[RMDB]
RNA sequence: GGGAACGACUCGAGUAGAGUCGAAAACCGUAGGUAUUCGUAGUGGCAAAUUCGAAGAACGAAUGUUCGAAAGAGCAUUCGGGAGAAUUUGAACUACCACGAGGAAUACCUAAACGGAAAACAUGAAUUAGGGCUGUUCGCAGCCCUAAUUCAUGAAGUUUGUAUAAUCGUUCGCGAUUAUACAAACAAAAGAAACAACAACAACAAC
Reactivity to 2A3 in 0.01 (KOAc 150mM, MgCl2 10mM, bicine 150mM(pH8.5), 24C), signal-to-noise 2, nucleotides 027 to 156: c010c000g010u000a010g000g010u000a000u000u010c010g010u030a020g000u010g020g010c000a010a010a010u020u000c010g100a300a010g000a040a000c000g000a010a000u010g000u020u000c010g030a100a010a020g000a000g000c000a000u000u000c010g000g000g000a020g000a000a000u010u000u010g000a020a010c050u130a060c070c000a010c010g010a070g030g000a000a000u000a000c000c000u000a010a010a000c000g040g000a000a050a010a030c000a000u020g000a000a010u030u000a000g000g000g000c000u010g050u110u110c300g000c150a000g000c000c000c000u000a000a000u000u000c000a000u000g000a000a010
Reactivity to DMS in 0.01 (KOAc 150mM, MgCl2 10mM, bicine 150mM(pH8.5), 24C), signal-to-noise 2, nucleotides 027 to 156: c000c010g020u000a030g000g040u000a010u010u010c000g010u000a300g000u000g000g000c010a030a030a230u000u000c030g000a050a100g020a150a160c010g030a030a010u000g020u000u000c000g000a190a150a300g000a020g000c000a000u000u000c000g000g010g010a190g010a080a160u020u010u000g000a040a030c040u000a040c000c010a030c000g000a300g000g020a030a000u000a010c000c000u010a020a030a140c020g020g010a070a030a100a230c010a030u000g010a020a000u000u000a000g000g000g040c000u010g020u010u000c240g050c020a040g020c010c000c000u000a000a000u000u000c000a000u010g010a040a060